Description
Structure probing data (2A3 and DMS) for a 207-nucleotide construct. 2A3 adducts were read by reverse transcription with SuperScript II with manganese.
RNA sequence: GGGAACGACUCGAGUAGAGUCGAAAAUCAUUGAAAUGCUGGGCGCUAUGGUCGUCCUCCUCCGGCUGACCUCCUUCUCAGCUGCUGACCGGCGCCGCACAGGCGGCAUCUCAGCUUCGUGUGCAAAAAAAGAAUGGUCGGUUCGCCGACCAUUCAACUAUUAGUAUUGCUUCGGCAAUACUAAUAGAAAAGAAACAACAACAACAAC
Reactivity to 2A3 in 0.01 (KOAc 150mM, MgCl2 10mM, bicine 150mM(pH8.5), 24C), signal-to-noise 2, nucleotides 027 to 156: u070c010a030u050u140g050a090a040a080u130g030c050u080g020g020g000c060g000c070u130a130u300g050g010u030c010g050u030c020c060u070c010c030u040c010c030g030g000c000u020g020a040c020c060u090c040c010u190u060c020u000c010a010g000c010u020g000c040u050g000a020c020c070g020g000c010g000c020c020g020c010a060c000a020g180g010c020g020g000c010a040u080c040u020c120a020g000c000u050u020c080g080u020g000u040g050c070a090a090a010a000a010a010a000g000a010a000u000g010g000u010c020g040g020u010u060c190g030c070c000g000a000c000c000a000u000u000c000a000a000
Reactivity to DMS in 0.01 (KOAc 150mM, MgCl2 10mM, bicine 150mM(pH8.5), 24C), signal-to-noise 1, nucleotides 027 to 156: u010c070a080u020u010g020a060a080a050u000g050c010u000g000g000g010c020g030c020u000a060u000g070g000u000c000g020u000c040c060u000c050c000u010c060c030g040g050c000u020g010a030c050c020u000c130c100u000u000c070u020c030a030g050c030u000g030c060u000g000a020c040c020g010g010c030g000c020c040g080c060a070c140a090g000g010c040g020g010c000a020u000c020u000c020a100g010c070u000u000c120g030u010g070u020g030c030a000a000a060a090a100a120a200g000a020a000u000g030g000u000c000g030g010u000u010c300g050c000c000g020a000c010c000a000u000u000c000a060a170
The reactions ran in a buffer of 150 mM KOAc, 10 mM MgCl2 and 150 mM bicine (pH 8.5), at 24 C. DMS adducts were read by reverse transcription with MarathonRT. Reactivities are given for positions 27 through 156. It was measured as part of the RMDB library M2RFPK.